[RMDB]
Structure probing data (2A3 and DMS) for a 177-nucleotide construct. Source: RMDB library OK2TRN, as collected in RNAgym. DMS adducts were read by reverse transcription with MarathonRT. The reactions ran in a buffer of 150 mM KOAc, 10 mM MgCl2 and 150 mM bicine (pH 8.5), at 24 C.
RNA sequence: GGGAACGACUCGAGUAGAGUCGAAAAGAUCGCACCUGCCUCGGCGAAGUCGCGGUGAGCACGAUCCAGAAACGCCACCACCUCGUCGUCGGAGGUCUGGGUGAAGUUGCGGUAACCCUGCCCGACGCAGGAUGCAAGGGUUCGCCCUUGCAUCCUGAAAAGAAACAACAACAACAAC
Reactivity to 2A3 in 0.01 (KOAc 150mM, MgCl2 10mM, bicine 150mM(pH8.5), 24C), signal-to-noise 2, nucleotides 027 to 126: g030a070u160c040g000c040a050c040c000u040g020c000c000u010c020g000g000c030g030a050a000g010u010c030g000c020g000g010u020g040a100g050c030a030c120g040a050u000c070c020a060g140a050a140a010c050g010c020c000a000c010c000a010c000c000u000c020g020u000c000g010u000c040g210g060a040g000g060u040c070u040g030g000g030u060g040a120a070g050u090u040g040c050g010g000u080a160a170c000c000c020u040g000c020c010c050g030a020c050g000
Reactivity to DMS in 0.01 (KOAc 150mM, MgCl2 10mM, bicine 150mM(pH8.5), 24C), signal-to-noise 2, nucleotides 027 to 126: g020a110u000c080g010c020a080c020c000u010g010c000c000u000c000g010g000c010g000a020a040g020u000c120g000c040g000g020u000g000a140g020c000a090c050g010a150u010c170c150a090g000a080a090a150c110g000c010c010a030c010c000a060c010c040u000c010g010u010c020g000u000c010g020g020a020g010g000u010c090u010g000g020g030u000g000a050a080g000u010u000g000c080g020g000u000a050a090c030c020c000u000g000c090c010c010g000a070c140g030